[RMDB]
Chemical mapping of a 177-nucleotide RNA with DMS and 2A3. The reactions ran in a buffer of 150 mM KOAc, 10 mM MgCl2 and 150 mM bicine (pH 8.5), at 24 C. The 2A3 profile rests on 434 reads. It was measured as part of the RMDB library RFM100. For 2A3 the reverse transcriptase was SuperScript II with manganese.

RNA sequence: GGGAACGACUCGAGUAGAGUCGAAAAUCUUGGUUUUAGAGAUUCUGUUUCGACAGUUUUUUUAGGCGGUGGACGUAUAUAGUUUACUUAAUCGUUUACUAUACGGUGGAGUACUAAUACUAUUUCAAAUUCGGUAGGGAUUCGUCCCUACCGAAUUAAAAGAAACAACAACAACAAC
Reactivity to DMS in 0.01 (KOAc 150mM, MgCl2 10mM, bicine 150mM(pH8.5), 24C), signal-to-noise 1, nucleotides 027 to 126: u020c020u000u040g000g000u030u000u020u000a050g020a090g000a060u030u000c050u000g010u000u010u070c100g010a020c090a050g000u000u000u070u000u000u030u010a000g000g000c040g000g000u030g020g000a100c060g000u010a060u000a020u000a000g000u000u010u020a000c030u000u000a050a020u030c050g010u000u010u060a080c150u010a080u030a040c030g000g000u000g000g040a050g000u000a040c060u000a030a080u020a100c190u000a070u010u020u020c080a050
Reactivity to 2A3 in 0.01 (KOAc 150mM, MgCl2 10mM, bicine 150mM(pH8.5), 24C), signal-to-noise 1, nucleotides 027 to 126: u030c000u010u170g180g030u010u060u080u290a040g000a000g010a020u070u000c000u070g010u000u140u040c080g040a000c000a030g020u000u110u000u000u000u220u000a080g000g060c040g000g010u070g000g130a030c060g000u000a020u000a000u000a130g000u100u030u030a020c000u050u020a000a000u020c020g010u060u040u060a110c130u190a160u070a220c100g020g030u080g020g000a110g020u010a000c000u010a000a030u020a100c020u060a040u060u100u150c110a020